RNA sequence: GGGAACGACUCGAGUAGAGUCGAAAAAAAUCGCGUGGGAAAUAGCUGGGGUUGGCGUGAAACCAUUAUCUUGCUGCACCACGACAUCCACGCCAUUAGCGGUCAACACUUCCAAUACGGAAAUAAAACGACCAAGAAGAUUCGUCUUCUUGGUCGUAAAAGAAACAACAACAACAAC
Reactivity to 2A3 in 0.01 (KOAc 150mM, MgCl2 10mM, bicine 150mM(pH8.5), 24C), signal-to-noise 1, nucleotides 027 to 126: a000a020a050u010c020g030c010g000u010g000g100g000a000a090a100u080a030g020c100u020g000g000g040g020u090u120g090g030c000g050u050g000a170a030a000c110c020a060u170u100a040u090c000u000u070g000c000u030g000c020a010c020c010a050c010g020a000c010a010u000c000c010a000c000g010c000c000a050u020u050a040g070c070g020g010u050c040a040a070c020a070c190u090u020c000c000a020a090u120a160c090g040g040a020a040a000u220a130a120a030
Reactivity to DMS in 0.01 (KOAc 150mM, MgCl2 10mM, bicine 150mM(pH8.5), 24C), signal-to-noise 1, nucleotides 027 to 126: a100a020a050u000c230g040c000g020u000g020g050g000a050a090a020u000a070g000c220u020g010g020g020g010u000u000g060g030c010g020u000g000a060a050a200c220c130a070u000u000a080u010c020u000u010g060c010u000g000c050a060c010c040a040c030g000a110c270a010u000c060c010a000c040g000c000c170a050u010u010a140g010c020g030g030u000c110a130a040c200a100c090u000u020c000c000a100a110u000a160c160g000g000a050a020a130u000a030a070a040
Chemical mapping of a 177-nucleotide RNA with 2A3 and DMS. The reactions ran in a buffer of 150 mM KOAc, 10 mM MgCl2 and 150 mM bicine (pH 8.5), at 24 C. The 2A3 profile rests on 759 reads.